[RMDB]
RNA sequence: GGGAACGACUCGAGUAGAGUCGAAAAACAGUCAGUACGCUGACAGAGGGAAACGGGAGCCGGGCUUGGGACAAGAGCCAUCCCAAGUCCAAGGCCAAGUAGGCUCUAGUGAUGGUACGCCAUCACAAAAACUGGUCUACCUUCGGGUAGACCAGAACCCAGUUAUGUUGUUCGCAACAUAACUGGGAAAAGAAACAACAACAACAAC
Reactivity to 2A3 in 0.01 (KOAc 150mM, MgCl2 10mM, bicine 150mM(pH8.5), 24C), signal-to-noise 1, nucleotides 027 to 156: a000c040a000g000u000c000a020g010u090a030c170g020c130u010g010a000c010a030g110a070g010g060g000a090a060a070c080g020g060g000a060g000c030c010g020g000g000c000u000u000g010g000g000a010c020a110a090g010a000g000c000c000a020u010c000c000c000a000a000g000u010c000c000a020a030g030g010c040c010a150a000g110u160a060g100g000c000u010c010u010a050g000u000g010a010u000g010g050u030a030c150g070c010c000a000u000c000a000c040a030a040a000a000a000c000u000g000g000u000c000u000a000c000c000u010u030c150g050g000g000u000a000g000a000c000c000a000g000a000a020